[RMDB]
RNA sequence: GGGAACGACUCGAGUAGAGUCGAAAAUAGGUCGGAUAGGGCAUAUGUACCUGUUUUAGGACGACCAAUCGCUUGCCCAGUUAAAGCAUCCACAUCUACAAUGCUUAACUUGUGUUGCUCGGCGCGAGGAGCAGCUAUGGUUCGCCAUAGCUGCUCCAAAAGAAACAACAACAACAAC
Reactivity to 2A3 in 0.01 (KOAc 150mM, MgCl2 10mM, bicine 150mM(pH8.5), 24C), signal-to-noise 1, nucleotides 027 to 126: u100a010g000g000u000c030g030g000a050u030a060g000g000g000c080a150u100a060u300g020u300a140c030c030u110g150u000u140u000u140a170g170g110a000c000g000a000c000c050a000a000u170c030g000c020u000u140g000c000c010c010a000g000u000u020a050a090a000g020c000a020u050c000c000a250c000a300u020c020u190a160c140a140a020u020g000c000u010u000a000a000c000u000u280g150u020g150u300u200g070c000u060c100g000g010c000g000c010g050a000
Reactivity to DMS in 0.01 (KOAc 150mM, MgCl2 10mM, bicine 150mM(pH8.5), 24C), signal-to-noise 1, nucleotides 027 to 126: u020a050g000g040u000c040g000g000a280u000a020g000g000g000c020a030u000a300u000g000u070a180c020c000u000g000u000u000u000u000a000g000g030a280c060g000a020c000c030a180a130u020c000g010c020u000u020g000c000c000c050a050g000u000u000a020a040a100g000c020a020u000c010c080a200c040a000u040c160u020a280c140a100a000u030g020c000u000u000a060a020c010u000u000g100u000g000u000u000g000c070u000c140g000g000c000g000c090g010a050

An RNA of 177 nucleotides, treated with 2A3 and DMS and read out base by base. High DMS reactivity at an A or C suggests that its Watson-Crick edge is free. DMS adducts were read by reverse transcription with MarathonRT. The RNA was probed in 150 mM KOAc, 10 mM MgCl2 and 150 mM bicine (pH 8.5) at 24 C.